[RMDB]
RNA sequence: GGGAACGACUCGAGUAGAGUCGAAAAGGUGUGAACUUUGUUGUUCAGCCAGUUGGUGUUGUAGACACUGAGUGGGGUAACAUGUUAACGGGCAUUGCUGCACGUCCUCCACCAGGUGAACAGUUUAGGGCAAGCACGUUCGCGUGCUUGAAAAGAAACAACAACAACAAC
Reactivity to DMS in 0.01 (KOAc 150mM, MgCl2 10mM, bicine 150mM(pH8.5), 24C), signal-to-noise 2, nucleotides 027 to 129: g030g050u030g020u010g030a040a010c000u010u010u020g070u080u010g090u030u000c000a260g060c020c000a130g040u050u000g060g030u010g060u190u000g030u060a090g070a190c120a030c070u000g000a170g090u020g000g040g020g080u000a010a010c130a120u030g040u050u050a210a020c040g000g030g080c050a150u030u030g000c210u000g030c070a050c000g000u000c270c000u000c020c050a020c030c030a070g010g000u020g010a050a080c160a060g000u010u000u050a090g070g020g020
Reactivity to 2A3 in 0.01 (KOAc 150mM, MgCl2 10mM, bicine 150mM(pH8.5), 24C), signal-to-noise 2, nucleotides 027 to 129: g220g000u170g070u000g000a140a000c000u090u110u260g100u300u040g010u200u000c000a000g060c020c020a070g000u040u100g000g020u000g030u040u140g080u040a000g020a040c020a000c030u010g000a040g000u050g000g000g000g000u000a080a000c050a080u070g000u040u190a120a000c030g000g000g000c000a030u000u240g010c070u090g040c080a020c010g030u000c000c000u000c010c010a000c010c060a000g150g150u070g060a010a010c060a030g000u000u010u050a140g050g000g000